Structure probing data (DMS and 2A3) for a 207-nucleotide construct. Reactivities are given for positions 27 through 156. The DMS profile rests on 1,982 reads. The 2A3 profile rests on 1,638 reads. The reactions ran in a buffer of 150 mM KOAc, 10 mM MgCl2 and 150 mM bicine (pH 8.5), at 24 C. For DMS the reverse transcriptase was MarathonRT.
RNA sequence: GGGAACGACUCGAGUAGAGUCGAAAAAUUCGAGCACAUAAAGGAUCUACUUAUGUGUGUAGUAGAUAUCUAUUUGAUCUGAAGACAUUCAUGGUGCAUAAUAAUGACCAAUCAUGAUUCUAUUUAAUUCAACAGUAAUAAGAUUGGUACGGUUAUGGAACACACGUAUCUUCGGAUACGUGUGUUCAAAAGAAACAACAACAACAAC
Reactivity to DMS in 0.01 (KOAc 150mM, MgCl2 10mM, bicine 150mM(pH8.5), 24C), signal-to-noise 1, nucleotides 027 to 156: a250u000u010c020g020a230g000c040a040c040a000u000a030a050a040g000g020a120u000c000u000a070c010u000u000a060u000g060u000g010u000g040u000a100g020u010a060g020a050u000a090u000c000u000a020u010u020u000g000a060u000c020u000g010a160a090g000a160c080a070u010u000c070a180u000g060g040u000g000c070a120u000a000a050u010a070a100u020g010a060c000c010a040a010u020c010a120u000g010a100u000u000c010u000a060u000u000u010a080a200u000u000c160a010a080c050a020g030u000a050a040u000a070a160g010a070u010u000g010g000u000a040c100g010g000u010u000a090u000g000
Reactivity to 2A3 in 0.01 (KOAc 150mM, MgCl2 10mM, bicine 150mM(pH8.5), 24C), signal-to-noise 4, nucleotides 027 to 156: a010u160u160c080g000a020g020c000a040c000a050u080a040a160a020g100g010a140u080c070u090a080c020u110u070a070u100g050u040g020u050g010u010a010g000u000a000g030a050u120a120u130c060u060a160u050u110u180g030a020u020c030u020g060a100a020g110a060c040a090u060u100c030a050u190g070g000u080g050c030a020u020a050a020u090a040a110u210g010a010c000c000a010a000u010c030a050u080g080a070u110u000c010u040a150u040u190u190a200a200u150u160c030a060a090c000a090g040u140a020a060u070a120a020g020a020u000u030g000g010u030a070c020g020g010u060u060a030u080g070